[RMDB]
RNA sequence: GGGAACGACUCGAGUAGAGUCGAAAACGUUCGUCGCCGGUGAGUUCGGUUAACUGCCCGUUACGCAUUUCAAGCAGACGAUCGGCGUGAAUAAAAUAGUGAUCAUCAUGGCUGAUGGCGAAAAUGGAUAGCGUAUUACUUUCGAGUAAUACGCUAUAAAAGAAACAACAACAACAAC
Reactivity to DMS in 0.01 (KOAc 150mM, MgCl2 10mM, bicine 150mM(pH8.5), 24C), signal-to-noise 7, nucleotides 027 to 126: c100g020u000u000c030g000u010c020g010c030c010g000g010u010g010a120g040u020u010c080g010g010u020u010a060a070c070u010g000c030c030c130g010u020u010a090c140g010c030a100u000u020u030c210a120a120g020c040a130g010a040c050g010a030u010c030g000g010c010g010u000g000a030a040u010a080a070a100a080u030a090g020u020g010a090u010c040a050u000c020a050u010g010g020c070u020g010a040u010g000g010c030g020a040a030a040a080u030g000g000
Reactivity to 2A3 in 0.01 (KOAc 150mM, MgCl2 10mM, bicine 150mM(pH8.5), 24C), signal-to-noise 9, nucleotides 027 to 126: c030g030u070u070c030g030u030c010g010c010c000g060g000u050g060a160g020u110u150c090g040g000u070u090a050a030c030u050g030c000c010c010g040u040u060a090c090g010c040a080u040u140u180c060a080a070g020c020a030g010a060c020g010a040u030c000g000g000c020g020u030g040a040a060u180a140a070a020a020u190a040g110u100g100a100u070c030a000u000c010a020u090g210g000c050u070g030a020u020g020g000c020g050a060a040a000a040u190g130g040

Record summary: Structure probing data (DMS and 2A3) for a 177-nucleotide construct. The data come from the RNA Mapping Database (RMDB), library OK1LIB. For DMS the reverse transcriptase was MarathonRT.